Background:
The record gives the reactivity of an RNA of 177 nucleotides to DMS. The DMS profile rests on 1,392 reads. Conditions: 150 mM KOAc, 10 mM MgCl2 and 150 mM bicine (pH 8.5), 24 C. Reactivities are given for positions 27 through 126. DMS adducts were read by reverse transcription with MarathonRT. Values are in units of 0.01, from 0 to 300, in steps of 10.
RNA sequence: GGGAACGACUCGAGUAGAGUCGAAAAGAUAUGGAGGGCAACAGAGCUGUACUCGGAAACGAGUAUACAGCGACGAAGUUGACCCUCCUAAGUCAAACCAUUUGGCAAUGUUCGCAUUGCCAAAUGGCUUCUUUCUGCCGUUCGCGGCAGAAAGAAGAAAAGAAACAACAACAACAAC
Reactivity to DMS in 0.01 (KOAc 150mM, MgCl2 10mM, bicine 150mM(pH8.5), 24C), signal-to-noise 1, nucleotides 027 to 126: g000a000u010a050u010g000g000a010g010g010g000c020a010a010c000a030g010a040g010c020u000g000u000a000c020u000c000g030g000a000a010a070c000g000a000g020u000a060u020a180c060a000g030c000g020a130c280g030a120a160g000u000u000g000a190c020c000c000u010c000c000u000a000a040g000u000c000a110a180a240c010c000a010u000u010u010g000g000c000a020a010u010g000u000u040c290g030c010a000u000u000g010c000c000a000a000a000u000g000g000